RNA sequence: GGGAACGACUCGAGUAGAGUCGAAAAAAGUGUCAUGCAGCUACUGUAUCAGAGCGAACGGAGCUCAGUUGUGUAGUUGGAAGUAAAAGGUUUCCCUAUUAUGUGUAUGCUAAUAGUGUGGCUAAGAUGUGCGGUAAGCAUAUGUGGUGCUGCAAGAGACGAUAAGUUUUUUCGAAAACUUAUCGUCAAAAGAAACAACAACAACAAC
Reactivity to 2A3 in 0.01 (KOAc 150mM, MgCl2 10mM, bicine 150mM(pH8.5), 24C), signal-to-noise 4, nucleotides 027 to 156: a000a000g090u080g040u060c020a030u070g040c000a030g030c030u050a040c020u090g040u150a090u200c100a040g030a030g030c020g060a140a070c100g040g070a040g020c000u000c070a020g020u090u070g080u020g030u070a120g010u020u040g020g030a070a070g040u150a040a110a010a040g040g000u000u010u020c010c010c010u020a080u040u050a070u080g050u020g030u020a050u170g040c030u040a030a050u040a160g090u080g020u030g050g020c000u000a050a040g060a110u080g010u040g030c020g000g130u160a120a020g040c050a020u040a040u130g130u050g020g030u050g000c010u010g000c000a050a000g040a030
Reactivity to DMS in 0.01 (KOAc 150mM, MgCl2 10mM, bicine 150mM(pH8.5), 24C), signal-to-noise 2, nucleotides 027 to 156: a090a110g040u020g010u000c050a060u000g050c030a070g030c030u000a070c050u000g020u010a090u000c020a160g000a070g030c030g000a120a140c140g020g030a300g010c020u000c030a100g000u000u010g030u010g030u000a090g000u000u020g020g010a070a110g010u000a040a050a070a070g030g000u000u000u000c040c010c000u000a090u000u000a060u010g010u010g020u020a070u000g020c070u000a050a110u000a060g020u000g030u010g000g010c020u000a090a090g010a070u000g030u000g030c040g030g030u010a060a090g020c020a030u000a060u000g020u000g030g000u010g030c010u010g000c040a050a110g000a300

An RNA of 207 nucleotides, treated with 2A3 and DMS and read out base by base. DMS adducts were read by reverse transcription with MarathonRT. The data come from the RNA Mapping Database (RMDB), library OK3TST. Reactivities are given for positions 27 through 156. For 2A3, 1,867 sequencing reads were counted. For 2A3 the reverse transcriptase was SuperScript II with manganese.